[RMDB]
RNA sequence: GGGAACGACUCGAGUAGAGUCGAAAAUACCCUCAUAUGUUAAACCUGAUAGUGUGUCUACCAGCGAUUUAGGUAGUCUCAUUGAUUGUAAUGCGGCUUCAGUUAACCAAAUUGUCUUGCGUAAUUCCACCUACUGCGUUCGCGCAGUAGAAAAGAAACAACAACAACAAC
Reactivity to 2A3 in 0.01 (KOAc 150mM, MgCl2 10mM, bicine 150mM(pH8.5), 24C), signal-to-noise 7, nucleotides 027 to 129: u090a010c010c040c000u050c070a130u180a050u160g140u150u230a070a070a050c030c050u040g060a090u040a080g040u060g020u020g020u030c020u020a030c010c020a020g030c030g040a040u030u050u130a070g020g000u020a000g020u000c010u000c000a020u020u060g110a160u110u130g040u200a000a000u020g020c000g000g000c000u070u050c030a100g020u080u080a060a040c000c000a020a040a080u050u050g060u070c030u030u080g010c040g030u030a050a090u030u010c000c010a020c000
Reactivity to DMS in 0.01 (KOAc 150mM, MgCl2 10mM, bicine 150mM(pH8.5), 24C), signal-to-noise 6, nucleotides 027 to 129: u040a080c030c000c020u000c160a060u000a090u040g030u060u030a050a080a140c080c060u000g020a100u000a080g000u060g020u040g000u010c050u030a030c050c000a070g000c140g020a090u040u020u050a100g050g010u000a060g060u040c040u000c020a000u030u020g040a070u040u070g030u030a010a050u030g030c000g020g030c020u020u050c090a030g040u040u050a100a100c060c050a030a060a080u030u030g010u060c000u020u050g040c170g030u030a060a150u000u000c050c040a000c040
Source: RMDB library 15KLIB, as collected in RNAgym. This 170-nucleotide RNA was probed chemically with 2A3 and DMS. Reactivities are rounded to 0.1 and cut off at 0 and 3. The reactions ran in a buffer of 150 mM KOAc, 10 mM MgCl2 and 150 mM bicine (pH 8.5), at 24 C. For 2A3 the reverse transcriptase was SuperScript II with manganese.